Source information
The data come from the RNA Mapping Database (RMDB), library M2RFPK. This 207-nucleotide RNA was probed chemically with DMS and 2A3. For DMS, 3,891 sequencing reads were counted.
RNA sequence: GGGAACGACUCGAGUAGAGUCGAAAAAAUGCCGCCUCAGUUCCAAGCUCUUUCGUGGCACUGUAAACAGUCCUAUUGAGUUAGGGGCCGUCAACCACGUUGCGAAGCUAAAUUAUCUGGUCGAGAGUUACGAUUCCCUACUUCGGUAGGGAAUCAAACUUUCAGUGUACUUCGGUACACUGAAAGUAAAAGAAACAACAACAACAAC
Reactivity to DMS in 0.01 (KOAc 150mM, MgCl2 10mM, bicine 150mM(pH8.5), 24C), signal-to-noise 2, nucleotides 027 to 156: a110a040u010g020c000c010g050c020c020u000c040a100g030u000u000c030c030a130a270g000c010u010c030u000u000u000c020g050u000g010g040c050a090c040u010g020u000a110a130a110c050a070g010u000c000c010u000a110u010u010g020a190g000u000u000a110g020g000g010g020c010c000g040u010c060a090a070c030c020a070c050g010u000u010g020c030g010a070a100g010c050u000a080a020a080u000u010a060u010c030u000g040g020u000c050g020a090g010a120g000u000u000a040c100g010a030u000u000c000c010c000u000a010c000u000u010c270g060g050u000a030g010g000g010a010a000u010c000a020a070
Reactivity to 2A3 in 0.01 (KOAc 150mM, MgCl2 10mM, bicine 150mM(pH8.5), 24C), signal-to-noise 3, nucleotides 027 to 156: a000a020u100g050c030c000g000c000c020u040c020a060g060u070u070c030c010a050a010g000c000u000c000u030u050u030c050g020u050g000g050c070a050c060u050g040u180a090a100a040c010a040g020u000c010c010u040a090u070u140g110a160g170u110u100a100g000g020g020g000c040c000g050u010c010a170a210c020c000a000c010g010u000u040g010c070g070a070a020g010c040u050a150a060a050u220u150a070u110c040u030g040g010u050c020g040a000g000a010g150u090u050a100c090g000a020u000u000c000c000c000u000a000c000u010u050c100g050g020u000a000g000g000g020a000a000u000c000a010a000
Reactivities are given for positions 27 through 156. The 2A3 profile rests on 1,659 reads.